[RMDB]
Structure probing data (2A3 and DMS) for a 177-nucleotide construct. For DMS, 10,609 sequencing reads were counted. Values cover nucleotides 27 to 126. It was measured as part of the RMDB library OK2TST.
RNA sequence: GGGAACGACUCGAGUAGAGUCGAAAAUGUAUCAAGCGCAUCAGGCGCAUUUUGAGGCUGAGUCAUUACGUAUUGAGGAGCAACAGGAGGCUUUCUUAUUACAGAUUGAAGAGCAGUUGCGUCAGCGGACAUGUAGUACGUUCGCGUACUACAUGUCAAAAGAAACAACAACAACAAC
Reactivity to 2A3 in 0.01 (KOAc 150mM, MgCl2 10mM, bicine 150mM(pH8.5), 24C), signal-to-noise 4, nucleotides 027 to 126: u120g030u040a130u120c080a100a060g050c030g010c040a050u050c110a100g080g090c020g010c040a020u130u070u030u140g140a060g080g000c020u030g010a020g070u020c020a030u040u130a040c070g030u040a050u030u110g020a030g010g030a030g060c050a030a130c050a150g100g080a050g150g000c020u020u100u040c010u010u060a070u030u080a020c010a030g100a110u050u070g030a080a020g010a020g100c020a020g040u090u070g000c000g020u000c010a020g020c030g070
Reactivity to DMS in 0.01 (KOAc 150mM, MgCl2 10mM, bicine 150mM(pH8.5), 24C), signal-to-noise 7, nucleotides 027 to 126: u010g010u000a080u010c080a090a140g020c040g020c020a130u000c180a140g020g010c020g020c020a050u000u010u000u010g010a110g010g010c020u000g000a100g010u000c030a050u000u000a110c150g010u000a040u000u010g000a020g000g010a060g020c020a050a090c100a130g000g010a130g010g000c020u000u000u010c010u000u000a060u000u000a050c070a160g000a090u000u010g000a040a040g000a160g010c040a050g000u000u000g010c050g010u000c030a080g010c070g010

Record summary
The 2A3 profile rests on 5,927 reads. Conditions: 150 mM KOAc, 10 mM MgCl2 and 150 mM bicine (pH 8.5), 24 C.